[RMDB]
RNA sequence: GGGAACGACUCGAGUAGAGUCGAAAAAGAUAUGGAAGGUAGACAUGAAGAACUGGGUACGAAGAACGCUUUCGGAAACGAAAGCGGGAGUACCUGAAAUCCUUCAACAGCUACCUUCCUAAGUCAAGAAGCAUAUUAAGUUCGCUUAAUAUGCUUCAAAAGAAACAACAACAACAAC
Reactivity to 2A3 in 0.01 (KOAc 150mM, MgCl2 10mM, bicine 150mM(pH8.5), 24C), signal-to-noise 4, nucleotides 027 to 126: a000g040a050u080a020u120g000g000a010a000g000g000u010a010g040a130c090a170u140g000a010a020g020a050a040c300u300g010g000g020u000a010c020g080a220a050g010a100a010c000g000c000u000u000u010c010g020g010a080a060a030c010g000a000a020a000g000c020g000g000g000a000g000u000a010c000c000u000g000a020a020a010u020c000c000u000u020c010a040a040c080a040g050c000u010a010c000c010u000u000c000c000u000a000a000g010u000c010a000a130
Reactivity to DMS in 0.01 (KOAc 150mM, MgCl2 10mM, bicine 150mM(pH8.5), 24C), signal-to-noise 7, nucleotides 027 to 126: a110g000a040u020a300u020g000g020a010a000g010g010u000a020g020a050c120a240u000g020a030a020g010a050a070c090u010g000g000g000u000a000c000g010a120a180g010a150a250c010g010c000u000u000u010c010g020g010a090a100a210c010g010a000a000a010g010c010g010g000g000a070g010u000a000c010c000u000g010a070a140a110u000c070c000u000u010c000a040a060c300a150g000c000u000a000c010c000u010u000c000c000u000a010a090g010u000c040a090a120

This 177-nucleotide RNA was probed chemically with 2A3 and DMS.
The DMS profile rests on 9,593 reads.
The reactions ran in a buffer of 150 mM KOAc, 10 mM MgCl2 and 150 mM bicine (pH 8.5), at 24 C.
DMS (dimethyl sulfate) methylates the pairing face of unpaired adenines and cytosines.
Reactivities are given for positions 27 through 126.